[RMDB]
The data come from the RNA Mapping Database (RMDB), library TTRDEL. The record gives the reactivity of an RNA of 177 nucleotides to 2A3 and DMS. The DMS profile rests on 2,219 reads. DMS adducts were read by reverse transcription with MarathonRT. Values are in units of 0.01, from 0 to 300, in steps of 10. 2A3 adducts were read by reverse transcription with SuperScript II with manganese.

RNA sequence: GGGAACGACUCGAGUAGAGUCGAAAAGAUAUGGAGCCUCCCCACCAGCGAAAGGUCGUUGAAAUCGGAAACGAUGGAGACCUAAGCUGAGGGCUCCUAAGUCAAAAGCCACACUUCGGUGUGGCAACAUUGGAUGCAUGUUCGCAUGCAUCCAAUGAAAAGAAACAACAACAACAAC
Reactivity to 2A3 in 0.01 (KOAc 150mM, MgCl2 10mM, bicine 150mM(pH8.5), 24C), signal-to-noise 1, nucleotides 027 to 126: g050a050u210a140u200g010g020a040g020c000c000u120c090c000c010c000a050c000c000a010g000c000g040a300a060a000g020g000u010c050g130u290u070g040a040a020a010u000c000g000g080a100a060a000c000g000a010u000g020g000a030g000a020c000c000u010a010a010g000c000u020g010a030g000g000g000c000u000c000c000u000a120a020g160u120c070a000a000a050a160g000c000c000a020c000a010c020u060u130c300g100g000u000g000u000g030g050c020a000a000
Reactivity to DMS in 0.01 (KOAc 150mM, MgCl2 10mM, bicine 150mM(pH8.5), 24C), signal-to-noise 3, nucleotides 027 to 126: g000a050u000a220u000g010g000a010g020c010c000u010c070c000c000c000a300c090c010a010g000c010g000a150a070a050g010g020u000c000g000u000u000g010a100a120a010u000c000g020g000a150a100a160c010g000a040u000g010g010a080g000a010c000c000u020a010a300g000c000u000g000a110g010g010g010c010u000c000c000u010a020a080g020u020c080a130a070a120a130g010c000c000a010c000a010c000u000u020c190g000g010u010g030u010g010g020c010a030a020